[RMDB]
RNA sequence: GGGAACGACUCGAGUAGAGUCGAAAACGAUGGUCAGUAGACCGCCAAAACCGAUGCCGCCGUCACUGCUGCUAGAACUUGAACUCAUUUCACUUCCUCUCGAAUGAAGGAUCAAACUUCUUAAUUGCAAUCCAUAGCUUCAAUGCCGCACUGAAUAAUCAUAUGCUUCCUUCGGGAAGCAUAUGAUAAAAGAAACAACAACAACAAC
Reactivity to DMS in 0.01 (KOAc 150mM, MgCl2 10mM, bicine 150mM(pH8.5), 24C), signal-to-noise 1, nucleotides 027 to 156: c070g020a110u000g060g030u000c050a180g030u000a150g010a060c060c000g020c030c010a120a070a150a180c010c000g020a040u000g020c000c000g030c000c030g010u010c040a070c020u010g020c020u000g000c040u000a090g020a030a060c090u010u000g000a090a100c080u040c010a090u000u010u000c020a070c020u010u020c010c000u000c040u000c060g010a080a090u000g010a100a090g040g010a110u010c030a110a050a100c040u000u000c050u000u010a060a110u000u000g020c050a050a110u000c020c020a110u000a100g020c010u000u000c040a070a180u010g030c020c030g000c070a110c030u000g010a100a060u010a150
Reactivity to 2A3 in 0.01 (KOAc 150mM, MgCl2 10mM, bicine 150mM(pH8.5), 24C), signal-to-noise 2, nucleotides 027 to 156: c070g060a110u150g000g000u040c010a040g110u050a050g210a050c000c000g000c000c000a050a080a030a050c000c010g070a050u070g000c000c000g020c020c000g010u040c010a010c050u080g020c010u010g040c000u010a020g040a060a020c010u020u080g030a010a030c010u000c080a070u000u040u110c040a030c030u080u010c000c010u010c000u040c030g050a060a070u140g040a100a040g020g010a040u060c040a060a120a020c010u010u000c030u050u110a100a120u090u100g030c030a020a050u000c020c030a060u030a100g000c000u090u050c030a070a070u040g040c010c000g000c020a030c030u030g020a070a100u190a040

The record gives the reactivity of an RNA of 207 nucleotides to DMS and 2A3.
For DMS, 2,077 sequencing reads were counted.
Source: RMDB library OK3TST, as collected in RNAgym.
For 2A3, 948 sequencing reads were counted.
2A3 is a SHAPE reagent: it acylates the 2'-hydroxyl of flexible nucleotides of all four kinds.
2A3 adducts were read by reverse transcription with SuperScript II with manganese.